[RMDB]
RNA sequence: GGGAACGACUCGAGUAGAGUCGAAAAUGAAAGUUGUGCAGUCUUCAGAAAAACAGCAUACAUUCAUGUAUUUGCAUACAACUUCGCAGGAUGUUCUUUGAUCACUGAGACCCAUUCACAUCACUCAUGCGCCAAUAGAAUUCGUUCUAUUGGCGCAAAAAGAAACAACAACAACAAC
Reactivity to DMS in 0.01 (KOAc 150mM, MgCl2 10mM, bicine 150mM(pH8.5), 24C), signal-to-noise 1, nucleotides 027 to 126: u000g000a080a060a120g000u000u010g040u000g010c060a060g040u000c040u000u000c110a100g000a050a090a060a070a000c080a050g010c070a060u010a040c020a030u000u010c230a030u010g020u000a090u000u000u050g030c070a100u000a100c070a050a040c040u000u010c080g030c040a050g000g000a050u010g000u000u000c040u000u000u000g010a030u010c050a050c040u010g010a070g000a120c010c010c090a080u000u030c100a020c030a010u010c080a090c170u000c100a110